[RMDB]
RNA sequence: GGGAACGACUCGAGUAGAGUCGAAAAACGAUCGUUAUUGCUCUGUCCAUCAAGGAGCUCAUGUGGCUUCUAAUGAUGCAAUAAUGACUCGUUGUUUAGCUAUUCAUUCUUGUUUUAUAGAACGUGUACAGUGCGAGGUUCGCCUCGCACAAAAGAAACAACAACAACAAC
Reactivity to 2A3 in 0.01 (KOAc 150mM, MgCl2 10mM, bicine 150mM(pH8.5), 24C), signal-to-noise 3, nucleotides 027 to 129: a020c000g000a000u020c020g010u000u000a000u000u000g000c030u000c050u130g240u100c060c000a040u010c040a040a010g000g000a010g010c000u000c040a150u270g220u300g050g000c000u010u020c000u000a020a060u060g050a000u090g000c000a000a010u010a000a000u000g000a000c110u000c020g000u000u000g060u060u220u080a000g000c020u130a150u110u120c040a050u020u000c020u030u000g160u110u090u090u100a160u040a070g040a020a030c020g010u040g000u140a050c060a110
Reactivity to DMS in 0.01 (KOAc 150mM, MgCl2 10mM, bicine 150mM(pH8.5), 24C), signal-to-noise 3, nucleotides 027 to 129: a010c020g040a070u030c030g040u020u040a000u040u000g030c020u040c210u070g010u030c060c060a110u030c150a000a000g050g000a040g020c020u020c050a050u090g040u080g020g010c000u000u020c000u000a210a110u010g000a130u000g000c040a000a000u020a020a000u000g030a050c160u000c000g010u030u000g000u070u020u030a090g040c160u070a050u030u120c100a190u040u020c040u000u010g040u040u060u030u050a040u010a080g010a020a000c140g030u010g030u010a030c130a120
Chemical mapping of a 170-nucleotide RNA with 2A3 and DMS. The data come from the RNA Mapping Database (RMDB), library 15KLIB. For 2A3 the reverse transcriptase was SuperScript II with manganese. Values cover nucleotides 27 to 129.